RNA sequence: GGGAACGACUCGAGUAGAGUCGAAAAUGAAAUCAAAAUAAGAGAGGUAAUGUAGGAGAAUAGAAUACAAUGGAAUUGGUCCUAUUGUCACAAAAUGACCGUAAUUACCACCACCAAAAUAAAAAAAGUAUUACUGUUUGUUCGCAAACAGUAAUACAAAAGAAACAACAACAACAAC
Reactivity to DMS in 0.01 (KOAc 150mM, MgCl2 10mM, bicine 150mM(pH8.5), 24C), signal-to-noise 1, nucleotides 027 to 126: u040g040a090a110a080u010c060a090a060a080a020u010a060a160g000a160g010a050g020g000u010a020a020u010g000u000a300g000g000a050g010a040a000u000a010g000a100a040u000a060c010a000a020u000g010g000a110a300u000u000g000g030u000c010c010u000a000u000u000g000u030c090a070c070a150a010a080a210u010g000a040c010c020g010u000a280a060u000u000a030c000c010a050c080c080a070c040c020a060a060a110a060u030a010a070a020a060a030a100a150
Reactivity to 2A3 in 0.01 (KOAc 150mM, MgCl2 10mM, bicine 150mM(pH8.5), 24C), signal-to-noise 2, nucleotides 027 to 126: u080g030a010a080a050u130c090a060a040a120a090u190a270a010g090a010g040a070g120g000u000a010a000u070g090u210a030g000g030a130g040a150a010u020a060g050a070a000u190a040c010a010a030u010g060g070a050a130u200u170g110g010u050c000c030u020a030u020u030g050u050c060a000c030a180a080a040a000u100g070a030c030c000g000u060a010a000u030u010a010c000c010a000c020c000a020c010c010a070a130a120a040u120a100a070a050a000a000a000a010
An RNA of 177 nucleotides, treated with DMS and 2A3 and read out base by base. Conditions: 150 mM KOAc, 10 mM MgCl2 and 150 mM bicine (pH 8.5), 24 C. 2A3 adducts were read by reverse transcription with SuperScript II with manganese. For DMS the reverse transcriptase was MarathonRT.